This 207-nucleotide RNA was probed chemically with DMS and 2A3.
Values cover nucleotides 27 to 156.
Source: RMDB library M2RFPK, as collected in RNAgym.
Values are in units of 0.01, from 0 to 300, in steps of 10.
For 2A3 the reverse transcriptase was SuperScript II with manganese.
RNA sequence: GGGAACGACUCGAGUAGAGUCGAAAACUGCCGCCGGGACGCAGUGAUCCUCGCAGGGUCGCACGGUCGCCUCGGGUCGGCCUCCUGUCGGCUCGACCUGCGAGGGGAGCGAGUGGCGAGCCCGACCAAAACUUUCUCGCCUUCGGGCGAGAAAGAACGUGUAAUUAUUCUUCGGAAUAAUUACACGAAAAGAAACAACAACAACAAC
Reactivity to DMS in 0.01 (KOAc 150mM, MgCl2 10mM, bicine 150mM(pH8.5), 24C), signal-to-noise 1, nucleotides 027 to 156: c040u020g020c030c000g020c010c020g000g020g020a160c010g030c000a200g010u070g010a060u000c010c010u000c030g010c040a060g010g020g070u000c070g010c070a080c050g030g020u000c010g020c060c030u000c010g020g020g030u000c010g000g000c040c010u030c190c050u020g030u010c010g020g000c020u010c020g000a180c010c010u000g000c040g010a050g000g010g020g000a050g010c020g030a180g030u000g020g000c020g000a140g010c040c050c020g000a060c030c030a090a120a120a180c000u000u000u000c000u000c000g000c000c000u000u000c300g060g030g030c010g000a000g000a000a000a000g000a050a090
Reactivity to 2A3 in 0.01 (KOAc 150mM, MgCl2 10mM, bicine 150mM(pH8.5), 24C), signal-to-noise 4, nucleotides 027 to 156: c020u030g010c020c010g020c010c010g050g040g110a070c030g020c020a140g200u000g010a020u000c000c000u000c000g000c010a010g020g030g070u170c070g020c050a090c100g050g030u030c020g020c020c020u010c000g000g000g010u030c000g000g000c000c010u170c040c060u160g020u050c010g010g000c000u020c020g030a060c000c000u010g000c000g000a010g000g010g000g000a000g010c000g010a070g100u100g030g000c010g010a050g020c030c050c010g000a010c000c030a040a040a010a060c000u010u000u000c000u000c000g000c000c000u040u050c160g090g000g000c000g000a000g000a010a000a000g010a010a010